[RMDB]
RNA sequence: GGGAACGACUCGAGUAGAGUCGAAAACCAAGGUAGUUCGCUACCUUGGAAAGAAAGCUCGAGCGAAGGGAAGGGAUAGGACGCUCGAGCAACCCACCCAAAAAAGAGCAUGCUUCGGCAUGCUCAAGACUAAUUCGUUGUUCGCAACGAAUUAGUCAAAAGAAACAACAACAACAAC
Reactivity to DMS in 0.01 (KOAc 150mM, MgCl2 10mM, bicine 150mM(pH8.5), 24C), signal-to-noise 1, nucleotides 027 to 126: c000c000a060a010g020g040u000a000g020u000u010c260g030c010u010a000c000c000u000u000g010g000a020a060a100g010a060a160a140g000c000u010c000g010a010g000c000g000a170a130g010g010g000a160a110g000g000g000a140u000a220g000g010a300c010g040c000u000c020g030a030g020c010a010a030c010c000c040a200c080c020c000a000a020a100a020a020a030g000a000g000c000a000u000g010c000u020u000c160g000g010c030a000u000g000c000u000c000a000a010
Reactivity to 2A3 in 0.01 (KOAc 150mM, MgCl2 10mM, bicine 150mM(pH8.5), 24C), signal-to-noise 3, nucleotides 027 to 126: c000c000a000a010g000g020u000a000g010u020u090c190g010c080u000a000c010c000u000u010g010g030a010a010a010g060a030a060a010g000c010u000c010g000a000g000c030g040a090a060g070g030g060a080a100g110g010g020a080u120a150g100g030a010c010g000c010u010c020g020a000g000c000a000a000c000c000c010a010c010c060c030a060a180a020a030a010a010g000a000g000c000a020u010g000c000u050u080c230g080g000c000a000u000g000c000u000c000a000a000

The record gives the reactivity of an RNA of 177 nucleotides to DMS and 2A3. For DMS, 980 sequencing reads were counted. The RNA was probed in 150 mM KOAc, 10 mM MgCl2 and 150 mM bicine (pH 8.5) at 24 C. The 2A3 profile rests on 4,653 reads.